[RMDB]
RNA sequence: GGGAACGACUCGAGUAGAGUCGAAAAGGGCCCCUGCCGCCUGCAAGUCGGAAAUUGCGCUGUGCUCCUGUGCUACGGCCUGUGGCUGGACUGCCUGCUGCUGCCCAACUGGCUGGCAAGAUGAAGCGUAUUCAAUAUUGUUCGCAAUAUUGAAUACAAAAGAAACAACAACAACAAC
Reactivity to 2A3 in 0.01 (KOAc 150mM, MgCl2 10mM, bicine 150mM(pH8.5), 24C), signal-to-noise 9, nucleotides 027 to 126: g040g010g020c010c000c000c000u020g020c010c020g020c000c000u040g030c060a070a040g060u070c030g060g040a040a090a100u130u110g010c040g000c030u040g040u080g050c020u040c020c020u070g040u080g050c020u040a030c020g060g010c000c030u100g020u040g040g000c020u030g010g040a060c040u060g020c000c000u030g010c010u040g010c010u040g010c000c000c010a020a050c040u040g030g000c010u040g020g000c030a040a040g060a120u160g060a070a020g070c040
Reactivity to DMS in 0.01 (KOAc 150mM, MgCl2 10mM, bicine 150mM(pH8.5), 24C), signal-to-noise 9, nucleotides 027 to 126: g010g010g010c030c020c030c050u000g010c040c050g010c040c020u010g010c050a060a070g010u010c050g010g000a060a080a100u020u020g000c050g010c030u000g010u010g010c050u000c050c020u010g010u010g010c040u010a080c070g010g010c050c040u010g010u010g010g010c020u010g000g000a100c080u010g010c020c010u000g010c030u010g010c040u010g000c030c010c010a080a110c100u010g000g020c020u010g000g010c040a070a080g010a100u010g010a100a120g010c180